An RNA of 177 nucleotides, treated with DMS and 2A3 and read out base by base. DMS (dimethyl sulfate) methylates the pairing face of unpaired adenines and cytosines. For DMS, 2,338 sequencing reads were counted. It was measured as part of the RMDB library OK2TST. The reactions ran in a buffer of 150 mM KOAc, 10 mM MgCl2 and 150 mM bicine (pH 8.5), at 24 C. For DMS the reverse transcriptase was MarathonRT.
[RMDB]
RNA sequence: GGGAACGACUCGAGUAGAGUCGAAAAUGUUGAUGUGUGAGUAGGAGUUUGCCUUGAGAAAUGCCUUCUAGGCAAAGCGAAGUGUGCAUGUAAAGGCACAGACCGUGAACACAGUGCAUCAGGUCAGCUCACCUGGAUUGUUCGCAAUCCAGGUGAGAAAAGAAACAACAACAACAAC
Reactivity to DMS in 0.01 (KOAc 150mM, MgCl2 10mM, bicine 150mM(pH8.5), 24C), signal-to-noise 3, nucleotides 027 to 126: u010g000u000u000g020a080u020g040u000g010u000g010a120g020u000a100g000g000a230g010u010u000u000g030c010c000u000u010g010a060g010a060a090a130u010g010c120c020u000u010c040u000a030g010g000c000a010a030a060g000c070g020a100a110g020u000g040u000g030c050a030u000g030u000a070a090a140g010g010c000a010c010a010g010a070c120c020g010u000g030a130a040c070a060c040a060g010u000g010c030a030u000c080a080g010g010u000c090a070g000
Reactivity to 2A3 in 0.01 (KOAc 150mM, MgCl2 10mM, bicine 150mM(pH8.5), 24C), signal-to-noise 1, nucleotides 027 to 126: u180g020u010u130g000a060u020g030u000g030u030g040a130g030u100a090g030g100a100g030u040u060u000g000c000c000u020u010g000a010g120a070a080a040u180g080c010c000u000u130c050u040a050g020g000c000a020a020a000g090c070g080a050a030g100u020g040u000g070c000a030u020g060u300a180a170a290g060g000c020a000c010a010g010a060c040c020g040u040g020a180a030c100a000c040a010g070u010g040c000a040u000c000a030g010g010u040c020a000g000